Structure probing data (DMS and 2A3) for a 177-nucleotide construct. The data come from the RNA Mapping Database (RMDB), library TTRDEL. Values cover nucleotides 27 to 126. The RNA was probed in 150 mM KOAc, 10 mM MgCl2 and 150 mM bicine (pH 8.5) at 24 C.

[RMDB]
RNA sequence: GGGAACGACUCGAGUAGAGUCGAAAAGAUAUGGACUAAGGGAGACGUGCAAUGAUGGAGCUCGGAAACGAGCUCUUGAGCACCUCGAAGAACUUAGUCCUAAGUCAAAGGGCCGUUCGCGGCCCAAGUCUUUUCUUUUGUUCGCAAAAGAAAAGACAAAAGAAACAACAACAACAAC
Reactivity to DMS in 0.01 (KOAc 150mM, MgCl2 10mM, bicine 150mM(pH8.5), 24C), signal-to-noise 2, nucleotides 027 to 126: g010a020u010a300u010g020g000a000c000u000a020a000g000g000g010a070g000a020c260g000u010g010c010a140a120u020g000a100u000g010g000a010g040c000u000c000g000g000a050a060a220c000g040a010g000c010u000c000u000u000g000a120g010c000a000c000c060u000c000g000a100a120g000a130a190c010u000u010a010g000u000c000c000u000a000a090g000u000c000a040a170a230g010g020g030c000c010g050u000u030c220g020c000g060g020c000c000c010a010a020
Reactivity to 2A3 in 0.01 (KOAc 150mM, MgCl2 10mM, bicine 150mM(pH8.5), 24C), signal-to-noise 1, nucleotides 027 to 126: g010a000u060a070u140g000g000a010c000u010a000a000g020g050g020a020g010a030c040g000u000g010c020a210a300u050g020a010u030g090g000a010g020c000u010c020g000g020a080a060a000c030g000a000g030c000u000c000u000u000g000a000g000c000a000c010c030u000c000g110a190a080g030a060a050c000u000u000a010g000u030c000c000u020a070a010g040u030c030a070a030a220g020g000g030c040c000g040u090u120c250g010c020g150g000c000c000c000a000a000